The record gives the reactivity of an RNA of 177 nucleotides to DMS and 2A3.
The RNA was probed in 150 mM KOAc, 10 mM MgCl2 and 150 mM bicine (pH 8.5) at 24 C.
It was measured as part of the RMDB library OK2TST.
The DMS profile rests on 20,712 reads.
Values cover nucleotides 27 to 126.
High DMS reactivity at an A or C suggests that its Watson-Crick edge is free.

[RMDB]
RNA sequence: GGGAACGACUCGAGUAGAGUCGAAAAACAGGAGAAAAAGCUACAAAAAUAAAUAUGGUAGCUGUAACUAGCCAAUGCCUUUAUAUCUCUUUGCUCUCCAACUGCCAGAUGAUGAGAUCAUAUUCCAUCAUAUACCAUGAUUCGUCAUGGUAUAUGAAAAAGAAACAACAACAACAAC
Reactivity to DMS in 0.01 (KOAc 150mM, MgCl2 10mM, bicine 150mM(pH8.5), 24C), signal-to-noise 9, nucleotides 027 to 126: a090c090a100g010g000a090g010a060a100a120a140a040g010c010u000a010c010a030a080a120a130a150u010a080a090a090u010a100u010g000g000u000a000g010c000u000g000u000a070a090c120u000a070g010c030c060a050a070u010g010c050c020u000u000u010a050u000a080u020c030u000c020u000u000u000g010c050u000c020u000c020c040a050a070c090u000g000c030c040a070g000a060u000g010a060u000g000a070g010a180u000c080a040u010a110u000u000c020c020a130
Reactivity to 2A3 in 0.01 (KOAc 150mM, MgCl2 10mM, bicine 150mM(pH8.5), 24C), signal-to-noise 9, nucleotides 027 to 126: a000c030a030g020g030a050g060a050a110a030a020a010g010c010u030a020c030a020a240a100a110a150u230a150a160a050u250a110u190g070g000u000a000g010c000u010g000u030a040a080c050u040a010g040c010c010a040a070u070g020c030c000u080u140u060a170u050a060u070c030u010c000u070u060u070g030c010u010c000u000c030c010a040a070c040u050g030c020c020a040g010a090u060g000a020u050g030a040g010a050u050c020a030u050a070u130u000c020c010a020